[RMDB]
RNA sequence: GGGAACGACUCGAGUAGAGUCGAAAACAAUUGAGCGUCGCACACACACAGACUAAGUCUGAGACUGACAGAGCCUAAACCGCUCUGUCAGUGUGCGAGAUAUCGUUCUUAAUGUGAGCAGAGGAAAACAUGAUUGACAUUUCGAUGUCAAUCAUGUAAAAGAAACAACAACAACAAC
Reactivity to DMS in 0.01 (KOAc 150mM, MgCl2 10mM, bicine 150mM(pH8.5), 24C), signal-to-noise 8, nucleotides 027 to 126: c050a090a100u010u000g010a010g000c030g020u000c010g000c000a010c010a080c200a200c120a180c000a020g000a010c020u020a120a160g020u000c000u010g000a080g010a130c180u000g000a010c000a010g010a010g010c000c010u010a070a080a140c300c300g000c000u000c000u000g010u000c000a000g010u000g010u000g010c000g010a030g000a100u000a070u020c020g010u000u000c000u000u000a080a080u010g010u010g000a100g010c060a080g000a070g000g000a080a060a100
Reactivity to 2A3 in 0.01 (KOAc 150mM, MgCl2 10mM, bicine 150mM(pH8.5), 24C), signal-to-noise 7, nucleotides 027 to 126: c020a020a140u050u100g000a010g020c020g040u000c000g010c010a000c000a000c010a000c000a000c010a010g010a010c030u230a300a040g010u000c000u000g030a030g040a080c010u010g000a000c000a000g000a000g000c000c000u040a060a050a050c010c020g000c000u000c000u010g000u010c000a000g000u000g000u000g000c000g000a000g020a010u120a030u090c020g020u020u020c000u040u150a200a130u140g050u070g110a050g010c080a030g050a100g060g140a040a070a020
Chemical mapping of a 177-nucleotide RNA with DMS and 2A3. The DMS profile rests on 8,833 reads.